[RMDB]
RNA sequence: GGGAACGACUCGAGUAGAGUCGAAAAUUCUGUACUAGUUAGCUAACUAGGUCUGUAUCUGGCGGCUCCGUGGAAGAACUGACGAGUUCGUAUUCCCGACCGCAGCCCUGGGAGACGUCUCAGGGGCGGCUUAGAGAGAAUUCGUUCUCUCUAAGCCAAAAGAAACAACAACAACAAC
Reactivity to DMS in 0.01 (KOAc 150mM, MgCl2 10mM, bicine 150mM(pH8.5), 24C), signal-to-noise 6, nucleotides 027 to 126: u020u010c020u000g020u020a170c010u000a010g000u010u010a140g010c150u030a060a020c000u000a020g010g000u020c060u000g010u010a060u010c050u010g020g010c020g000g010c060u030c090c120g010u010g000g010a080a090g000a020a020c010u010g000a040c090g000a030g010u010u000c000g010u010a210u010u000c010c000c010g000a130c050c030g010c020a100g010c000c000c000u010g000g000g000a010g000a040c080g000u000c000u000c010a020g000g000g000g030c180
Reactivity to 2A3 in 0.01 (KOAc 150mM, MgCl2 10mM, bicine 150mM(pH8.5), 24C), signal-to-noise 8, nucleotides 027 to 126: u060u020c020u050g060u060a060c000u000a020g030u050u040a060g150c120u150a030a030c000u000a020g030g060u010c020u050g090u040a120u050c060u080g090g020c010g000g000c030u050c110c070g070u160g050g020a070a050g010a050a030c030u050g040a060c050g030a020g010u040u020c010g000u010a170u040u020c000c000c000g040a080c020c010g020c030a050g060c000c000c000u000g000g010g000a030g010a020c080g130u010c010u000c010a010g000g010g000g010c050
The data come from the RNA Mapping Database (RMDB), libraries RFM100 and RFMREP. An RNA of 177 nucleotides, treated with DMS and 2A3 and read out base by base. Values cover nucleotides 27 to 126. Conditions: 150 mM KOAc, 10 mM MgCl2 and 150 mM bicine (pH 8.5), 24 C. For 2A3 the reverse transcriptase was SuperScript II with manganese.